[RMDB]
RNA sequence: GGGAACGACUCGAGUAGAGUCGAAAACAUUGCAGCUGGCAAGGGCCAUGAGAGAGUCCACCUGGGGCCAGGCCUCCAGAGCCAAGGCCACAGCUGGGUCUACAUGGGCAGCCAUGUCUGGGGGCAGACCCGUAGCGUCAUUCGUGACGCUACGGGUAAAAGAAACAACAACAACAAC
Reactivity to DMS in 0.01 (KOAc 150mM, MgCl2 10mM, bicine 150mM(pH8.5), 24C), signal-to-noise 2, nucleotides 027 to 126: c060a080u030u000g010c030a040g000c050u000g000g010c000a120a100g030g000g000c000c040a010u000g010a190g010a040g000a060g000u000c000c020a020c300c000u000g000g010g010g020c010c030a190g010g000c010c030u010c200c300a080g030a270g010c020c000a100a070g050g000c010c020a010c020a020g000c120u000g000g010g010u010c020u000a020c010a020u000g000g000g000c030a070g000c000c030a030u000g000u010c010u000g000g000g000g000g020c160a170g000

Notes:
Conditions: 150 mM KOAc, 10 mM MgCl2 and 150 mM bicine (pH 8.5), 24 C. An RNA of 177 nucleotides, treated with DMS and read out base by base. For DMS the reverse transcriptase was MarathonRT.